[RMDB]
Structure probing data (2A3) for a 207-nucleotide construct.

RNA sequence: GGGAACGACUCGAGUAGAGUCGAAAAAGCACGGUUUUUGAGGACGCAUUUUGUCCGUGCGGUAAUGCCCUCCUUUACAAUUUCUCGCAUGGUGCGGGAGUGUGGAGAGGAAACAAAAGCUAGUCUCGAUAGGCGGUUAACUUCGGUUAACCGCCAACUUCGCCUACAUCUUCGGAUGUAGGCGAAGAAAAGAAACAACAACAACAAC
Reactivity to 2A3 in 0.01 (KOAc 150mM, MgCl2 10mM, bicine 150mM(pH8.5), 24C), signal-to-noise 1, nucleotides 027 to 156: a000g000c010a010c010g010g000u000u010u000u000u070g020a050g010g010a030c030g020c150a170u020u000u020u040g000u020c010c000g000u000g000c010g090g040u200a060a070u300g020c010c020c000u000c000c010u080u140u130a020c050a050a070u040u140u050c000u030c020g080c070a070u300g270g060u300g170c000g000g000g000a030g000u020g000u010g050g000a030g020a070g050g100a040a000a000c000a000a000a000a000g030c010u090a020g010u000c000u000c030g050a090u080a240g000g020c000g000g010u020u010a000a000c000u020u020c230g020g000u000u000a000a000c000c000g010c000c000a000a000

The RNA was probed in 150 mM KOAc, 10 mM MgCl2 and 150 mM bicine (pH 8.5) at 24 C.